RNA sequence: GGGAACGACUCGAGUAGAGUCGAAAACAACGCUACCGCAUAAACCGAACUUGACAAUCGUGCAGUAGCGAAAAAUGCUCCCGAUUGUCAACGGAGGAGCUAACACACAACAAAACAAAAACAAAAAGACGUACCAUCAGUUCGCUGAUGGUACGUCAAAAGAAACAACAACAACAAC
Reactivity to 2A3 in 0.01 (KOAc 150mM, MgCl2 10mM, bicine 150mM(pH8.5), 24C), signal-to-noise 2, nucleotides 027 to 126: c050a030a000c090g030c000u110a230c030c040g000c000a040u270a280a100a000c080c030g090a120a040c020u020u010g000a000c000a000a060u130c070g000u010g000c050a040g000u040a000g010c000g040a030a000a000a000a000u090g000c000u000c000c000c000g000a060u180u090g010u030c000a020a020c070g050g000a000g000g010a000g040c010u090a130a000c020a030c020a000c040a080a020c000a050a090a110a050c060a020a020a140a120a000c020a020a070a100a030a000